About this RNA
Structure probing data (DMS and 2A3) for a 177-nucleotide construct. DMS adducts were read by reverse transcription with MarathonRT. Conditions: 150 mM KOAc, 10 mM MgCl2 and 150 mM bicine (pH 8.5), 24 C. Values are in units of 0.01, from 0 to 300, in steps of 10.

RNA sequence: GGGAACGACUCGAGUAGAGUCGAAAAUGAUCCAAAAUGGAAGACUUUGUGCGACAAUGCUUCAAUCCAAUGAUUGUCGAGCUUGCGGAAAAAGCAAUGAAAGAAUAUGGGGAAGAUCCGAAAAUCGGGUAAUUAACACAUUCGUGUGUUAAUUACCAAAAGAAACAACAACAACAAC
Reactivity to DMS in 0.01 (KOAc 150mM, MgCl2 10mM, bicine 150mM(pH8.5), 24C), signal-to-noise 5, nucleotides 027 to 126: u020g010a160u010c010c020a050a050a140a120u010g000g020a120a080g000a120c040u000u000u010g030u000g010c020g010a090c040a020a020u020g010c030u010u010c070a030a050u000c060c250a110a140u010g030a030u000u000g000u010c120g010a080g020c030u000u000g010c050g000g010a020a060a030a050a030g010c040a060a050u010g020a120a070a080g000a080a070u000a090u010g000g000g010g000a090a050g000a070u000c040c030g010a060a060a070a100u010c220g010
Reactivity to 2A3 in 0.01 (KOAc 150mM, MgCl2 10mM, bicine 150mM(pH8.5), 24C), signal-to-noise 3, nucleotides 027 to 126: u030g010a040u060c010c000a010a000a020a140u180g030g040a070a020g060a090c030u020u060u080g080u080g080c020g040a080c050a020a030u130g040c020u030u070c020a030a070u000c040c050a090a080u240g010a010u000u020g030u040c020g010a010g040c010u050u040g030c030g090g030a030a140a020a000a020g000c020a040a050u180g060a120a030a020g070a060a060u110a120u210g020g000g000g020a030a060g030a070u020c030c060g030a080a020a010a070u120c040g020